[RMDB]
RNA sequence: GGGAACGACUCGAGUAGAGUCGAAAACGAAUUGUGCCAGUACAAGGCAUAAACAGUUGCAAUCCUUCGUAGGUUGUGGUAUAAGAUUGUACUGUGGUGUCGUCUUCGUCUCCAUCAGAAACUACUAGUAGACCAAGAGUUUCGACUCUUGGUCUACAAAAGAAACAACAACAACAAC
Reactivity to DMS in 0.01 (KOAc 150mM, MgCl2 10mM, bicine 150mM(pH8.5), 24C), signal-to-noise 2, nucleotides 027 to 126: c050g000a050a150u010u010g000u000g020c020c000a130g000u020a100c260a090a120g010g040c000a030u010a030a070a070c100a100g050u000u010g000c030a020a040u000c010c070u000u000c170g020u000a080g020g000u010u000g040u010g000g030u000a030u020a100a060g010a050u000u000g010u020a010c000u000g020u000g030g030u000g000u000c060g030u000c070u000u000c050g020u000c000u000c020c050a080u030c070a080g010a080a060a070c060u000a130c100u010a140
Notes:
The record gives the reactivity of an RNA of 177 nucleotides to DMS. It was measured as part of the RMDB library OK2TST. The DMS profile rests on 1,528 reads.